[RMDB]
Record summary
Structure probing data (2A3 and DMS) for a 177-nucleotide construct. For DMS, 5,649 sequencing reads were counted. It was measured as part of the RMDB library TTRDES.

RNA sequence: GGGAACGACUCGAGUAGAGUCGAAAAGAUAUGGAACUGUCACUUGAACAAUGAUGUCCCUUCGGAAACGAAGGGAUUGAGUUUGAGUGAGCAGUUCCUAAGUCAAACGUCACGUUCGCGUGACGAACAUACUACAGGCGUUCGCGCCUGUAGUAUGAAAAGAAACAACAACAACAAC
Reactivity to 2A3 in 0.01 (KOAc 150mM, MgCl2 10mM, bicine 150mM(pH8.5), 24C), signal-to-noise 3, nucleotides 027 to 126: g020a040u130a060u190g000g010a000a020c010u010g040u090c030a010c010u000u000g020a000a000c040a120a300u230g040a040u130g070u030c000c000c000u000u000c010g000g040a070a060a090c000g010a010a000g000g000g010a000u010u010g000a000g010u000u000u020g010a010g010u010g000a050g020c000a000g000u010u010c000c000u000a020a010g020u010c050a120a040a080c010g000u000c000a010c000g010u080u090c300g000c020g130u020g000a010c000g000a030a010
Reactivity to DMS in 0.01 (KOAc 150mM, MgCl2 10mM, bicine 150mM(pH8.5), 24C), signal-to-noise 5, nucleotides 027 to 126: g010a040u010a300u010g010g010a030a000c000u000g030u000c010a000c010u010u000g010a000a010c000a230a200u010g020a160u010g010u000c010c000c010u000u010c000g000g000a110a120a270c000g010a020a000g000g030g000a000u000u000g000a060g000u000u000u000g020a000g010u000g010a110g020c000a000g010u000u000c000c010u000a010a080g020u010c040a120a110a280c010g000u000c000a010c010g000u000u010c280g010c020g040u000g000a000c000g000a070a180
Record summary:
The RNA was probed in 150 mM KOAc, 10 mM MgCl2 and 150 mM bicine (pH 8.5) at 24 C. For DMS the reverse transcriptase was MarathonRT. 2A3 is a SHAPE reagent: it acylates the 2'-hydroxyl of flexible nucleotides of all four kinds.